[RMDB]
RNA sequence: GGGAACGACUCGAGUAGAGUCGAAAAAUUCAUAUUUCAUAGUGAGAGGUAAAAUUCUUGGAUCUAUGGAAGAUGAACUACUGCGAAAGCAUUUACCAAGGAUGUUUUCAUUAAUCAAGAACGAAAGCCAUAGGUAUCUGUUCGCAGAUACCUAUGGAAAAGAAACAACAACAACAAC
Reactivity to 2A3 in 0.01 (KOAc 150mM, MgCl2 10mM, bicine 150mM(pH8.5), 24C), signal-to-noise 2, nucleotides 027 to 126: a000u010u000c010a000u020a040u040u000u000c010a000u000a010g010u000g010a040g020a000g110g030u230a080a130a130a220u160u030c010u030u040g030g040a030u020c010u010a000u000g000g000a000a020g000a000u010g010a010a020c010u080a030c030u120g070c020g040a010a010a010g020c000a000u040u040u010a220c110c050a070a040g030g000a010u000g030u010u020u050u030c000a040u060u200a060a120u110c170a130a050g070a180a030c050g040a100a010a030g050
Reactivity to DMS in 0.01 (KOAc 150mM, MgCl2 10mM, bicine 150mM(pH8.5), 24C), signal-to-noise 2, nucleotides 027 to 126: a190u000u040c000a000u000a030u000u000u000c000a000u000a000g000u000g010a300g000a000g020g000u000a070a150a070a180u000u000c020u000u000g020g010a180u000c020u000a000u000g000g000a000a010g000a000u020g010a010a000c140u010a120c240u010g000c150g010a040a040a010g030c010a020u000u000u000a230c190c190a130a100g000g000a010u000g000u000u000u000u020c000a030u000u010a050a040u010c150a040a100g010a020a010c020g000a020a100a090g000

An RNA of 177 nucleotides, treated with 2A3 and DMS and read out base by base.
Source: RMDB library RFMREP, as collected in RNAgym.
For DMS the reverse transcriptase was MarathonRT.
The RNA was probed in 150 mM KOAc, 10 mM MgCl2 and 150 mM bicine (pH 8.5) at 24 C.